An RNA of 177 nucleotides, treated with DMS and read out base by base. Conditions: 150 mM KOAc, 10 mM MgCl2 and 150 mM bicine (pH 8.5), 24 C. DMS adducts were read by reverse transcription with MarathonRT. Source: RMDB library TTRINS, as collected in RNAgym.
[RMDB]
RNA sequence: GGGAACGACUCGAGUAGAGUCGAAAAGAUAUGGAAACGUUAGAGGUGUCUCAUAGCAAGCUUUAGUUAUCGGAAACGAUAACAGGAAGUGAUGACCUAUGAGGACACCUCUAACGUUUCCUAAGUCGCUAUAACUCAUGUUCGCAUGAGUUAUAGCAAAAGAAACAACAACAACAAC
Reactivity to DMS in 0.01 (KOAc 150mM, MgCl2 10mM, bicine 150mM(pH8.5), 24C), signal-to-noise 4, nucleotides 027 to 126: g010a100u010a300u010g020g000a010a000a000c010g020u000u000a000g010a010g000g040u010g000u000c000u000c000a010u010a000g000c040a070a190g020c000u000u000u000a110g020u000u000a000u000c010g000g010a110a120a270c000g000a010u000a000a000c000a110g010g000a000a010g020u000g000a060u030g010a120c300c010u000a000u000g000a050g010g010a010c010a000c000c000u000c010u000a000a010c000g010u000u000u000c000c000u000a020a110g020u000c130